[RMDB]
RNA sequence: GGGAACGACUCGAGUAGAGUCGAAAAGGAAAGAUGGAAACAUCAAAGACACAACAGCAAAGUGUCAAGCUGAAAGACGUGGAACUGGCUAUUAAAAUUGGCCGGAUCAUACCACGAUGAAAAAAAAGAAGCAAGUAAAGUUCGCUUUACUUGCUUCAAAAGAAACAACAACAACAAC
Reactivity to 2A3 in 0.01 (KOAc 150mM, MgCl2 10mM, bicine 150mM(pH8.5), 24C), signal-to-noise 2, nucleotides 027 to 126: g060g000a150a050a100g000a020u030g000g010a030a050a000c010a010u030c010a030a060a010g000a000c000a000c000a070a150c040a070g220c090a060a100a060g000u010g010u040c020a020a020g060c050u080g040a150a090a000g120a030c000g000u000g000g020a000a100c000u000g030g000c020u040a050u130u170a200a170a140a090u090u070g000g010c030c020g000g000a020u050c020a020u050a130c000c010a010c030g030a050u130g030a120a000a030a010a000a000a000a040
Reactivity to DMS in 0.01 (KOAc 150mM, MgCl2 10mM, bicine 150mM(pH8.5), 24C), signal-to-noise 2, nucleotides 027 to 126: g000g020a190a200a070g000a000u000g010g010a150a080a080c010a000u000c020a060a150a090g000a030c010a030c050a140a100c140a110g000c190a160a180a080g030u000g010u000c020a110a110g020c080u000g000a130a050a080g010a090c020g020u000g000g000a110a060c000u000g000g000c000u010a010u000u000a020a030a200a090u040u030g050g000c010c000g000g000a050u000c160a040u000a110c000c010a000c020g000a080u010g000a000a010a020a000a080a040a120a210